The data come from the RNA Mapping Database (RMDB), library TTRDEL. Chemical mapping of a 177-nucleotide RNA with 2A3 and DMS. The RNA was probed in 150 mM KOAc, 10 mM MgCl2 and 150 mM bicine (pH 8.5) at 24 C.
RNA sequence: GGGAACGACUCGAGUAGAGUCGAAAAGAUAUGGAGAACUAUGAAGCCAUUGCAAUGAUGUCGGAAACGAUUGAGCAAAUGGUGGAGUUCUCCUAAGUCAAAACAGCGUCAGUUCGCUGACGCUGAACGGAACUAUAUUCUUCGGAAUAUAGUUCCGAAAAGAAACAACAACAACAAC
Reactivity to 2A3 in 0.01 (KOAc 150mM, MgCl2 10mM, bicine 150mM(pH8.5), 24C), signal-to-noise 7, nucleotides 027 to 126: g010a020u070a040u160g010g010a020g000a000a000c010u040a150u300g030a030a000g010c000c000a000u000u000g000c020a060a300u200g050a040u130g070u030c010g020g030a040a030a060c010g010a020u030u050g010a020g000c010a000a070a280u000g000g000u030g000g010a010g000u000u000c000u000c000c000u000a020a000g010u010c020a000a000a110a160c000a000g000c000g000u000c000a020g020u050u130c280g010c140u000g000a000c000g000c000u010g000a010a010
Reactivity to DMS in 0.01 (KOAc 150mM, MgCl2 10mM, bicine 150mM(pH8.5), 24C), signal-to-noise 5, nucleotides 027 to 126: g000a040u010a300u000g000g000a010g010a010a010c000u010a170u000g030a140a300g000c000c000a000u000u000g000c000a150a140u010g000a080u010g010u000c010g010g000a110a080a140c010g010a000u000u000g000a140g000c000a010a020a020u000g000g010u000g010g000a020g000u000u000c000u000c000c000u010a000a040g000u010c040a090a060a080a240c010a010g000c010g010u000c000a010g010u000u010c250g020c010u000g000a000c000g000c000u000g000a020a100